The data come from the RNA Mapping Database (RMDB), library RFM100. An RNA of 177 nucleotides, treated with 2A3 and read out base by base. Reactivities are given for positions 27 through 126. 2A3 adducts were read by reverse transcription with SuperScript II with manganese.
RNA sequence: GGGAACGACUCGAGUAGAGUCGAAAAGAAAGUAGUUUUGGUCAAAGUGAUUUUUCUGUACGUGUGAGAACUCAAUUCUGAGUUAACAGAGGGGGUAGCGAGUGAGUAUAGCUAUUAUCAUUGGCACACAUCUGAGCGGGUUCGCCCGCUCAGAUGUAAAAGAAACAACAACAACAAC
Reactivity to 2A3 in 0.01 (KOAc 150mM, MgCl2 10mM, bicine 150mM(pH8.5), 24C), signal-to-noise 1, nucleotides 027 to 126: g140a000a190a000g080u180a020g000u170u170u040u200g000g000u050c110a180a060a080g000u000g000a000u000u000u000u000u000c000u030g050u030a110c020g050u050g060u060g050a110g100a190a030c000u000c030a000a180u300u050c000u020g000a000g000u090u090a020a020c020a020g080a100g000g100g000g030g000u000a000g160c060g030a060g000u160g000a080g000u100a000u220a030g180c000u080a000u000u100a020u080c000a000u030u030g040g060c120a000c000